Structure probing data (DMS) for a 177-nucleotide construct. Conditions: 150 mM KOAc, 10 mM MgCl2 and 150 mM bicine (pH 8.5), 24 C.

[RMDB]
RNA sequence: GGGAACGACUCGAGUAGAGUCGAAAAGAUAUGGAUGCGAAGGCUGAGGCAAUAAUCACCCGAAGAACUCACUCGGAAACGAGUGAGGGAGGGUGAUUAUUGCCCAGUGUUGACGCAUCCUAAGUCACCAUUCAUAAGUCUUCGGACUUAUGAAUGGAAAAGAAACAACAACAACAAC
Reactivity to DMS in 0.01 (KOAc 150mM, MgCl2 10mM, bicine 150mM(pH8.5), 24C), signal-to-noise 3, nucleotides 027 to 126: g000a070u000a300u000g030g010a010u020g010c000g020a300a180g000g000c000u010g000a180g020g020c000a010a000u000a000a000u000c000a020c000c000c000g020a090a150g000a100a230c000u000c010a020c000u020c000g010g010a120a110a170c000g000a000g020u000g000a010g020g000g010a030g020g000g010u000g000a000u000u000a000u010u000g000c000c010c000a010g000u010g010u010u000g000a300c040g000c010a000u000c020c000u010a020a140g000u000c020a300
Record summary
Source: RMDB library TTRINS, as collected in RNAgym.